[RMDB]
RNA sequence: GGGAACGACUCGAGUAGAGUCGAAAAGCAAGCUGCGAUAAUCCGCGGUUAGGGGCACACACCCUUCGACCCGCGGGUCUCCGAAUGGGCGAACCCGCCAGGAGAUGUCCUGGCAUCCCCCUUGGGAUGGUGGUAGGAAAUUCGUUUCCUACCACCAAAAAGAAACAACAACAACAAC
Reactivity to DMS in 0.01 (KOAc 150mM, MgCl2 10mM, bicine 150mM(pH8.5), 24C), signal-to-noise 4, nucleotides 027 to 126: g000c070a090a090g030c030u010g010c060g040a070u020a110a030u000c020c010g020c000g010g000u000u000a090g030g000g010g000c130a150c250a160c300a240c040c020c000u020u010c110g000a060c280c000c010g030c020g000g000g000u010c050u000c010c010g000a080a070u040g000g010g000c080g010a080a110c060c050c040g020c010c000a050g000g000a050g000a190u030g010u010c010c030u000g000g000c020a140u020c000c010c000c120c050u020u000g000g000g000a130
Reactivity to 2A3 in 0.01 (KOAc 150mM, MgCl2 10mM, bicine 150mM(pH8.5), 24C), signal-to-noise 6, nucleotides 027 to 126: g060c050a040a030g020c030u120g030c040g030a010u090a120a040u070c000c000g010c000g010g010u030u040a040g010g000g050g000c090a040c010a010c010a060c190c010c000u120u170c080g060a070c000c020c010g010c000g000g000g000u010c010u020c020c010g040a100a090u120g040g010g000c030g030a050a060c000c000c030g000c000c000a000g050g010a100g030a110u160g120u070c000c000u000g000g000c000a000u010c000c010c000c010c040u060u230g030g020g020a050